[RMDB]
RNA sequence: GGGAACGACUCGAGUAGAGUCGAAAACUGGGUCAUGAGAAAGGCGGACAUUGGGUCCAGACCUGCUUGCCAUAGCAGGUGUCAUGGUGUUCGCCGAUUUUGGUGAUACUGAAUUGUGGUAAGCAGGGUCGAUAUCUACGUUCGCGUGGGUAUUGACAAAAGAAACAACAACAACAAC
Reactivity to 2A3 in 0.01 (KOAc 150mM, MgCl2 10mM, bicine 150mM(pH8.5), 24C), signal-to-noise 9, nucleotides 027 to 126: c020u020g010g010g020u030c030a060u090g030a030g070a110a070a030g040g010c020g010g010a010c020a040u090u150g100g010g000u030c020c020a020g040a030c000c000u000g000c000u020u030g070c020c030a080u130a040g030c040a020g030g040u010g010u020c020a040u110g080g000u050g030u080u080c040g000c000c010g010a020u020u040u050u150g100g000u020g000a010u040a110c010u030g040a080a110u160u090g020u020g030g020u050a030a020g020c020a030g060g020
Reactivity to DMS in 0.01 (KOAc 150mM, MgCl2 10mM, bicine 150mM(pH8.5), 24C), signal-to-noise 9, nucleotides 027 to 126: c020u000g010g010g010u010c020a060u010g000a090g010a050a080a170g010g010c020g010g010a030c020a090u010u020g010g010g010u010c060c130a110g010a150c010c000u000g000c000u000u000g010c080c070a030u010a040g020c090a160g000g010u000g010u000c030a050u010g010g020u020g000u010u010c040g010c010c000g000a040u010u010u020u030g010g020u000g010a020u000a030c020u010g010a070a300u020u010g020u000g000g000u010a020a030g000c030a040g000g010
The record gives the reactivity of an RNA of 177 nucleotides to 2A3 and DMS. The DMS profile rests on 95,050 reads. Reactivities are given for positions 27 through 126. DMS adducts were read by reverse transcription with MarathonRT. For 2A3, 89,297 sequencing reads were counted.